Source: RMDB library M2RFPK, as collected in RNAgym. Structure probing data (2A3 and DMS) for a 207-nucleotide construct. For 2A3 the reverse transcriptase was SuperScript II with manganese. The 2A3 profile rests on 6,996 reads. DMS (dimethyl sulfate) methylates the pairing face of unpaired adenines and cytosines.
[RMDB]
RNA sequence: GGGAACGACUCGAGUAGAGUCGAAAAAGAGGAGGCUGGGUUUUGCGAUCUUUAAGCAGAUGGCAGGUUCACCCCGUACGGUGCGGAAGUUCGCGCUUCCGUGAAACGUGAAAAUCGGACGGUGGCUAAGACCAAUAACAGUUCGCUGUUAUUGGAAGUAUGAAAUUGACUUCGGUCAAUUUCAUACAAAAGAAACAACAACAACAAC
Reactivity to 2A3 in 0.01 (KOAc 150mM, MgCl2 10mM, bicine 150mM(pH8.5), 24C), signal-to-noise 6, nucleotides 027 to 156: a010g060a040g030g010a020g020g010c050u040g040g020g040u030u050u100u070g030c030g030a040u040c040u050u140u110a110a040g030c020a030g020a070u040g050g000c040a020g020g020u070u100c010a040c000c000c000c000g000u010a010c020g000g110u090g010c000g000g000a010a000g010u100u220c090g010c020g000c080u010u000c010c000g010u010g030a110a120a000c020g000u040g040a100a030a020a100u060c010g010g020a020c050g020g020u040g000g000c010u040a070a010g050a070c000c000a000a000u010a000a000c000a010g020u050u060c150g030c120u000g000u000u000a000u000u000g000g010a010a010
Reactivity to DMS in 0.01 (KOAc 150mM, MgCl2 10mM, bicine 150mM(pH8.5), 24C), signal-to-noise 3, nucleotides 027 to 156: a080g000a120g020g020a040g010g020c050u000g020g020g010u000u010u010u000g010c020g000a100u010c060u000u000u010a090a180g030c080a050g010a070u000g000g020c040a130g020g010u000u000c040a080c010c010c010c040g010u000a040c030g000g050u000g010c000g000g000a040a050g020u000u010c300g010c300g000c010u000u000c020c060g020u010g010a060a040a100c070g010u010g000a060a040a100a090u000c020g000g010a060c010g010g010u000g020g010c030u010a080a120g000a180c000c000a020a020u010a020a010c010a030g020u000u010c300g030c010u000g010u000u000a010u010u000g000g020a030a110